The record gives the reactivity of an RNA of 177 nucleotides to 2A3 and DMS.
For DMS, 1,127 sequencing reads were counted.
It was measured as part of the RMDB library OK2TRN.
The reactions ran in a buffer of 150 mM KOAc, 10 mM MgCl2 and 150 mM bicine (pH 8.5), at 24 C.
[RMDB]
RNA sequence: GGGAACGACUCGAGUAGAGUCGAAAACAUGUCUGUGCUGUGUGGAACCACCUGAUGACAUGGUUAACGAGGAAGACGAUGUGUUGACCGGCUGCCGUUUGAGGACUUUGGUCACCCAGACUAGACAAGCUCCAGAAUACUUCGGUAUUCUGGAGCUAAAAGAAACAACAACAACAAC
Reactivity to 2A3 in 0.01 (KOAc 150mM, MgCl2 10mM, bicine 150mM(pH8.5), 24C), signal-to-noise 1, nucleotides 027 to 126: c080a010u060g030u000c020u000g060u080g160c100u030g050u020g010u050g210g060a050a170c020c000a010c010c030u040g070a130u010g000a010c030a110u140g090g000u110u190a120a120c010g010a080g020g020a040a020g020a030c050g130a270u130g130u070g000u150u080g040a070c000c010g100g000c070u100g020c000c000g140u080u000u090g050a030g000g090a020c000u110u160u170g030g000u010c000a010c000c000c000a000g010a050c010u040a000g000a040c010a070
Reactivity to DMS in 0.01 (KOAc 150mM, MgCl2 10mM, bicine 150mM(pH8.5), 24C), signal-to-noise 1, nucleotides 027 to 126: c040a090u000g010u000c020u010g040u000g010c090u000g000u010g050u010g010g000a100a060c030c000a020c110c010u000g020a110u010g020a050c020a070u000g010g020u000u010a050a090c070g010a150g020g010a060a150g010a080c080g000a060u000g000u020g000u000u020g010a150c070c030g010g000c170u020g010c010c020g000u020u000u010g010a140g000g020a100c160u000u010u000g000g010u000c010a080c000c050c010a070g000a050c080u000a110g000a060c130a170